[RMDB]
RNA sequence: GGGAACGACUCGAGUAGAGUCGAAAAUAGCUGCAACAUUAUUUGAGUAUCCUGAAAACGGGCUUUUCAGAAUGGUGUUGCCGUAUAAAAUUGUAGGCGUGCAUAGUGGCCCGUAUAGCAGGCAUUAGAGAGCUACAGAUGUUCGCAUCUGUAGCAACGAUACAAGACUCUUCGGAGUCUUGUAUCGAAAAGAAACAACAACAACAAC
Reactivity to DMS in 0.01 (KOAc 150mM, MgCl2 10mM, bicine 150mM(pH8.5), 24C), signal-to-noise 1, nucleotides 027 to 156: u000a140g000c030u000g000c020a080a040c010a060u000u010a080u000u000u000g010a210g040u000a040u010c030c000u000g000a020a040a080a060c060g000g020g030c090u000u000u030u000c040a100g010a050a060u010g020g010u000g010u000u000g020c000c030g000u000a090u030a080a100a140a200u010u000g020u010a080g050g040c090g000u000g020c040a050u000a100g040u010g010g000c020c000c020g010u000a110u010a060g010c020a050g030g010c070a070u020u000a120g010a120g040a150g000c000u000a010c000a020g030a000u010g010u000u000c300g020c050a040u000c000u040g060u000a000g040c000a020a000
Reactivity to 2A3 in 0.01 (KOAc 150mM, MgCl2 10mM, bicine 150mM(pH8.5), 24C), signal-to-noise 1, nucleotides 027 to 156: u140a000g030c010u010g020c020a020a000c030a050u030u040a060u070u120u050g110a090g060u110a190u170c000c040u080g120a050a020a020a020c080g000g020g000c030u080u120u020u050c060a080g050a140a050u050g040g000u030g010u020u060g000c020c000g000u040a040u110a140a130a040a100u110u200g040u110a070g020g090c110g010u040g000c030a020u060a060g080u110g110g000c000c000c000g020u020a020u050a000g020c000a000g060g000c000a000u000u100a070g080a020g040a000g140c000u000a000c000a000g000a000u000g040u040u070c170g050c130a000u010c000u000g000u000a030g000c000a000a040
An RNA of 207 nucleotides, treated with DMS and 2A3 and read out base by base. Conditions: 150 mM KOAc, 10 mM MgCl2 and 150 mM bicine (pH 8.5), 24 C. 2A3 adducts were read by reverse transcription with SuperScript II with manganese. The DMS profile rests on 2,216 reads. Reactivities are rounded to 0.1 and cut off at 0 and 3.